[RMDB]
RNA sequence: GGGAACGACUCGAGUAGAGUCGAAAAACGACACGACUGCAACCUGCUUUCGAUACAUUAUCGUCUGCGGUACUUGUAGUGCUAAAUGAAUGUGGGCCCUCCGUGUGCGUGUGAACUAAUUGAACUAGCACUCCGUUGGUCACCGAACAAUCUGGGGGUCAGCUUGUAAGUUCGCUUACAAGCUGACAAAAGAAACAACAACAACAAC
Reactivity to 2A3 in 0.01 (KOAc 150mM, MgCl2 10mM, bicine 150mM(pH8.5), 24C), signal-to-noise 3, nucleotides 027 to 156: a000c090g080a010c050a030c130g070a010c020u020g000c000a040a230c000c000u000g000c000u000u010u000c000g010a010u030a050c120a250u150u300a030u140c010g000u020c020u010g000c010g000g020u040a100c030u010u000g010u040a000g010u050g050c050u040a080a120a120u180g120a100a040u130g020u140g030g030g000c030c010c000u000c050c020g020u010g000u000g030c010g000u080g060u030g100a030a010c000u010a080a110u080u060g040a010a000c020u030a050g000c010a010c020u000c000c000g020u000u010g000g000u010c010a020c080c040g050a040a010c030a040a060u040c080u060g000g000g000g040
Reactivity to DMS in 0.01 (KOAc 150mM, MgCl2 10mM, bicine 150mM(pH8.5), 24C), signal-to-noise 1, nucleotides 027 to 156: a200c000g020a150c000a020c070g000a030c040u000g000c030a040a040c040c010u040g030c030u000u000u000c020g010a040u000a110c300a220u030u000a050u000c020g030u000c040u010g010c010g010g000u010a050c060u000u000g040u000a100g000u000g000c050u000a060a220a180u030g010a060a140u000g020u020g020g030g000c030c000c010u000c010c040g080u000g040u000g000c080g040u030g000u010g000a040a260c050u000a020a050u000u030g030a110a230c030u000a210g030c150a250c140u050c010c030g010u010u000g010g050u000c020a050c040c000g040a030a050c040a040a060u000c040u040g010g010g020g010